[RMDB]
RNA sequence: GGGAACGACUCGAGUAGAGUCGAAAAGAUAUGGACGGUUCACAGGGCCGACGAAGUCGGAAACGACAGAGGCUCCUGUGAGACCGUCCUAAGUCAAAAGAAGAAGAGUGUUCGCACUCUUCUUCAACAAAAGGAUAGUGUUCGCACUAUCCUUUUGAAAAGAAACAACAACAACAAC
Reactivity to DMS in 0.01 (KOAc 150mM, MgCl2 10mM, bicine 150mM(pH8.5), 24C), signal-to-noise 9, nucleotides 027 to 126: g010a040u000a300u000g000g010a010c000g000g000u000u000c000a010c000a010g010g000g000c000c000g000a140c240g000a080a100g000u010c000g000g000a110a090a200c010g010a020c000a040g010a190g010g010c000u010c010c010u000g010u000g000a030g000a010c000c000g010u000c000c000u000a000a080g010u000c030a080a070a120a140g000a010a010g000a010a010g010a020g010u000g010u000u010c220g010c010a010c000u000c000u000u000c000u000u000c000a070a170
Reactivity to 2A3 in 0.01 (KOAc 150mM, MgCl2 10mM, bicine 150mM(pH8.5), 24C), signal-to-noise 3, nucleotides 027 to 126: g000a020u070a030u140g000g010a000c000g020g000u000u020c000a010c000a010g010g000g000c000c020g100a300c070g040a120a000g010u000c010g030g010a120a050a040c030g010a000c020a010g050a030g010g020c050u190c110c010u000g000u010g000a010g000a000c000c000g000u000c000c000u000a000a000g000u000c000a010a050a030a060g010a010a000g010a010a000g010a000g010u030g040u130u200c290g100c060a000c010u000c000u010u000c000u000u000c000a000a000

Structure probing data (DMS and 2A3) for a 177-nucleotide construct. Source: RMDB library TTRDEL, as collected in RNAgym. For DMS the reverse transcriptase was MarathonRT.